[RMDB]
RNA sequence: GGGAACGACUCGAGUAGAGUCGAAAAGAUAUGGAUAGUGAAGGACAUGACCGUUCGGAAACGAAGAUCGGUCAACAGCCUUACUAUCCUAAGUCAAAACCGAAUUAAGGUUCGCCUUAAUUCGGAAGCUAUACGUCAAGUUCGCUUGACGUAUAGCAAAAGAAACAACAACAACAAC
Reactivity to 2A3 in 0.01 (KOAc 150mM, MgCl2 10mM, bicine 150mM(pH8.5), 24C), signal-to-noise 6, nucleotides 027 to 126: g020a010u050a020u100g010g000a000u020a010g050u130g300a050a020g000g020a060c090a190u090g000a000c000c000g000u010u010c020g020g080a170a180a130c120g030a080a030g100a110u130c010g000g000u010c000a020a040c060a030g010c000c000u000u020a000c000u000a000u000c000c000u000a080a010g030u010c030a030a010a080a150c010c000g000a000a010u000u000a000a000g020g040u030u110c220g200c010c000u010u010a010a010u000u000c000g000g000a000a010
Reactivity to DMS in 0.01 (KOAc 150mM, MgCl2 10mM, bicine 150mM(pH8.5), 24C), signal-to-noise 4, nucleotides 027 to 126: g010a030u010a300u000g010g010a010u000a000g000u010g020a010a010g000g000a060c120a220u000g000a020c000c000g040u020u000c000g000g020a080a090a170c100g010a090a100g010a070u010c010g020g010u000c000a000a040c210a150g000c010c000u000u000a030c000u000a010u000c000c000u000a010a060g000u000c010a100a040a130a160c010c000g000a030a000u000u000a000a010g000g000u000u020c200g010c000c000u000u000a000a030u000u000c000g010g000a020a010
The record gives the reactivity of an RNA of 177 nucleotides to 2A3 and DMS.
Conditions: 150 mM KOAc, 10 mM MgCl2 and 150 mM bicine (pH 8.5), 24 C.
Values cover nucleotides 27 to 126.
For DMS the reverse transcriptase was MarathonRT.
Values are in units of 0.01, from 0 to 300, in steps of 10.